This 177-nucleotide RNA was probed chemically with DMS and 2A3. Reactivities are given for positions 27 through 126. For DMS, 935 sequencing reads were counted. It was measured as part of the RMDB library OK2TST. 2A3 adducts were read by reverse transcription with SuperScript II with manganese. For DMS the reverse transcriptase was MarathonRT.

[RMDB]
RNA sequence: GGGAACGACUCGAGUAGAGUCGAAAAAGGAAUCCAGAUCGGCAAUGCCGGGAGUGGAUGCACUGUGUAGCCAGAUCUGCGCUACAUUCUUUACCCUCGCGGUGCGUGAGUGGAUUGCACAGGUUAACGCGUAGCUCAAGUUCGCUUGAGCUACGCGAAAAGAAACAACAACAACAAC
Reactivity to DMS in 0.01 (KOAc 150mM, MgCl2 10mM, bicine 150mM(pH8.5), 24C), signal-to-noise 2, nucleotides 027 to 126: a200g020g030a070a040u000c020c000a050g010a170u000c000g020g030c010a170a160u000g010c020c000g070g060g020a110g010u000g040g040a010u000g000c120a030c150u000g000u010g000u000a010g000c010c030a130g020a110u020c150u010g000c160g020c000u000a010c030a010u000u000c060u000u010u010a110c010c020c020u020c040g080c000g020g010u000g030c070g000u010g000a170g040u000g010g000a090u000u000g040c070a160c140a060g000g000u000u000a100a200
Reactivity to 2A3 in 0.01 (KOAc 150mM, MgCl2 10mM, bicine 150mM(pH8.5), 24C), signal-to-noise 2, nucleotides 027 to 126: a000g080g020a040a010u050c000c000a000g050a220u000c000g080g040c020a150a300u300g010c010c010g000g090g030a040g060u250g000g020a040u120g030c110a060c120u070g000u000g000u020a000g000c010c020a100g060a300u100c050u150g000c030g010c060u040a030c020a020u090u020c020u010u160u110a150c000c020c000u010c040g070c030g020g060u120g030c010g030u020g020a080g040u180g050g010a120u040u110g010c020a010c050a010g240g000u070u130a070a050